[RMDB]
RNA sequence: GGGAACGACUCGAGUAGAGUCGAAAAAAGUUAGACUUGCUUGGUUCAGAGACCAGGCCAGGAUCGAGCAUUUGCCAUUGGUGACCUGGAGGUGUCUGGAGCAGGAUCCUUUUAAAUAGGCAAGCUGUCAUUCCCUUUAGUUCGCUAAAGGGAAUGAAAAAGAAACAACAACAACAAC
Reactivity to 2A3 in 0.01 (KOAc 150mM, MgCl2 10mM, bicine 150mM(pH8.5), 24C), signal-to-noise 2, nucleotides 027 to 126: a000a000g040u060u060a010g030a110c000u020u020g000c000u070u010g010g090u180u040c020a010g000a000g040a100c000c000a050g070g170c020c000a000g000g040a160u070c040g010a020g070c030a080u150u140u300g050c000c050a110u050u150g020g030u100g120a080c000c010u000g000g030a030g050g000u050g040u000c030u000g040g010a030g070c020a030g070g050a080u090c000c000u150u100u040u140a080a060a040u090a030g000g000c030a020a010g020c050u050g050
Reactivity to DMS in 0.01 (KOAc 150mM, MgCl2 10mM, bicine 150mM(pH8.5), 24C), signal-to-noise 4, nucleotides 027 to 126: a060a060g020u000u000a070g010a200c010u000u000g010c010u000u000g000g000u000u000c040a060g010a110g000a040c010c000a080g010g000c000c020a020g010g000a120u000c030g010a120g020c040a260u010u000u000g030c040c060a180u010u010g010g030u000g010a060c040c000u000g000g000a120g000g020u000g010u000c010u000g000g000a050g020c040a040g000g000a080u000c020c010u000u000u000u010a030a090a090u000a080g010g000c050a040a030g010c080u000g000